[RMDB]
RNA sequence: GGGAACGACUCGAGUAGAGUCGAAAACACUUCGGGACGAUCUGCGAGAAGCGGAUGGCGAAGAAACGCCGCUUCGACCUCGAGCGGGCGAGCUGGCACGACGCGAGAUUCGGGAACGGAACACCGGAAGCAUUUAACUGUUCGCAGUUAAAUGCUUAAAAGAAACAACAACAACAAC
Reactivity to DMS in 0.01 (KOAc 150mM, MgCl2 10mM, bicine 150mM(pH8.5), 24C), signal-to-noise 5, nucleotides 027 to 126: c140a130c050u000u000c020g010g010g030a140c040g010a040u000c010u000g010c010g010a180g010a100a120g010c010g020g020a060u010g010g010c030g000a070a050g000a080a080a100c110g010c020c000g010c030u000u000c010g000a180c110c050u000c040g020a070g020c080g000g010g000c020g010a050g020c050u010g030g020c010a100c040g000a070c060g010c040g000a100g000a150u000u000c020g000g000g010a100a110c060g010g000a080a070c120a130c030c040g000g000
Reactivity to 2A3 in 0.01 (KOAc 150mM, MgCl2 10mM, bicine 150mM(pH8.5), 24C), signal-to-noise 4, nucleotides 027 to 126: c030a000c010u050u060c020g020g020g120a040c030g040a060u010c020u070g020c000g030a130g030a230a020g010c010g030g030a060u040g080g010c040g050a050a010g000a070a150a010c060g000c000c010g030c030u110u100c030g150a240c010c040u080c030g070a050g040c110g010g030g010c020g010a030g000c040u140g060g020c040a020c110g070a020c040g040c030g050a050g010a100u050u050c010g000g000g030a080a070c020g020g020a080a020c040a030c040c020g000g000